[RMDB]
RNA sequence: GGGAACGACUCGAGUAGAGUCGAAAAGUCGCCGCGUCAACAUCAACGCCCAGCGCGGGCGAGGGAUGCGUCCUACGGGGGUGCCCCAUUCGCCGGCAUGGCAGAGGACGGCAAGAUUGCCGCGACGCACCUCCCACCGAUUCGUCGGUGGGAGGUGAAAAGAAACAACAACAACAAC
Reactivity to 2A3 in 0.01 (KOAc 150mM, MgCl2 10mM, bicine 150mM(pH8.5), 24C), signal-to-noise 1, nucleotides 027 to 126: g090u040c010g000c080c000g000c000g010u030c020a060a110c000a080u030c020a030a070c060g000c030c030c000a090g080c300g030c080g130g010g000c030g000a050g030g090g000a050u130g020c000g020u050c000c010u020a140c160g080g000g030g050g150u110g020c000c000c000c000a140u060u070c020g000c000c000g000g090c080a100u160g020g000c010a040g030a020g070g000a030c040g020g010c030a050a040g130a120u110u270g000c010c020g000c000g000a000c000g010
Reactivity to DMS in 0.01 (KOAc 150mM, MgCl2 10mM, bicine 150mM(pH8.5), 24C), signal-to-noise 1, nucleotides 027 to 126: g010u000c040g020c030c040g000c020g000u000c000a020a010c060a130u000c020a130a180c050g010c000c000c020a260g000c170g040c130g000g010g020c000g000a020g030g000g020a060u020g000c000g010u000c000c000u000a170c270g040g020g010g000g010u000g000c000c000c030c010a230u040u000c030g040c020c020g010g000c080a110u020g050g020c010a130g010a210g000g010a080c010g010g010c090a030a190g000a030u000u000g020c080c020g020c020g000a010c090g030

Description
An RNA of 177 nucleotides, treated with 2A3 and DMS and read out base by base. Conditions: 150 mM KOAc, 10 mM MgCl2 and 150 mM bicine (pH 8.5), 24 C. Reactivities are given for positions 27 through 126. The DMS profile rests on 800 reads. Source: RMDB library OK2TRN, as collected in RNAgym. For 2A3 the reverse transcriptase was SuperScript II with manganese.